[RMDB]
RNA sequence: GGGAACGACUCGAGUAGAGUCGAAAAAGAUUUGCCAGCAGUUGAUCAGUACAGACACAUGAUUAAAGCACAACCCAAGCAAAAAUUGGACACUUCAAUCCAAACGGAGUACCCGGCUUUGCAGACACUCCUAUUUAAUAUUCGUAUUAAAUAGGAGAAAAGAAACAACAACAACAAC
Reactivity to DMS in 0.01 (KOAc 150mM, MgCl2 10mM, bicine 150mM(pH8.5), 24C), signal-to-noise 6, nucleotides 027 to 126: a100g010a150u010u010u000g010c030c030a040g020c050a060g010u010u000g010a050u000c050a070g010u000a100c100a090g010a120c100a050c050a060u010g000a120u010u010a050a090a080g010c060a060c070a070a090c050c020c020a090a080g000c050a030a040a040a100a140u000u000g000g010a040c050a040c050u010u000c080a070a100u010c070c110a040a060a120c200g010g000a050g010u010a070c030c030c010g000g020c130u000u010u000g010c070a120g000a110c160a090
Reactivity to 2A3 in 0.01 (KOAc 150mM, MgCl2 10mM, bicine 150mM(pH8.5), 24C), signal-to-noise 3, nucleotides 027 to 126: a020g070a070u090u030u080g030c020c010a010g000c010a030g070u090u080g080a050u040c010a010g040u080a060c010a030g070a080c040a010c020a080u050g010a100u140u160a090a050a000g010c030a010c000a030a040c000c010c010a020a030g020c040a000a070a080a070a060u090u120g010g010a010c010a000c080u090u120c020a080a060u030c090c000a050a040a020c070g000g040a020g020u030a030c000c010c010g030g090c050u020u050u080g000c020a010g020a090c010a010